[RMDB]
RNA sequence: GGGAACGACUCGAGUAGAGUCGAAAAGACACCCUCGCCCUCCUGUCAAACUCCGAAUCCACCGCCGCCGUAGAUGGGCGGAGUCAGGGGCAGGGGGUAAGCUCCUGUUCCGAGAGGGAGACAACCCCACUUAGUCUUACUUCGGUAAGACUAAGUGAAAAGAAACAACAACAACAAC
Reactivity to DMS in 0.01 (KOAc 150mM, MgCl2 10mM, bicine 150mM(pH8.5), 24C), signal-to-noise 3, nucleotides 027 to 126: g000a110c120a260c010c020c020u000c040g030c050c010c010u000c030c040u010g000u000c100a090a130a070c020u000c010c010g000a070a090u010c030c000a030c020c040g000c070c060g010c080c100g040u010a080g000a050u000g000g010g000c000g010g030a020g000u000c130a080g010g010g000g000c010a030g010g010g000g020g020u010a040a150g010c030u000c020c010u000g010u000u000c060c030g000a110g000a100g000g010g010a130g000a160c070a070a070c010c000c010
Reactivity to 2A3 in 0.01 (KOAc 150mM, MgCl2 10mM, bicine 150mM(pH8.5), 24C), signal-to-noise 2, nucleotides 027 to 126: g010a010c040a050c040c010c000u000c020g030c000c030c020u090c010c020u020g010u030c040a040a040a050c010u010c020c010g040a080a110u060c020c010a020c000c060g140c050c050g100c030c050g090u050a040g000a110u050g000g040g000c010g000g000a000g000u020c050a030g090g020g000g000c000a070g010g010g020g000g000u040a090a050g070c010u000c010c020u100g060u210u040c070c030g040a070g000a010g080g000g030a010g010a010c030a020a060c000c000c000
The record gives the reactivity of an RNA of 177 nucleotides to DMS and 2A3. For 2A3 the reverse transcriptase was SuperScript II with manganese. DMS adducts were read by reverse transcription with MarathonRT. High DMS reactivity at an A or C suggests that its Watson-Crick edge is free.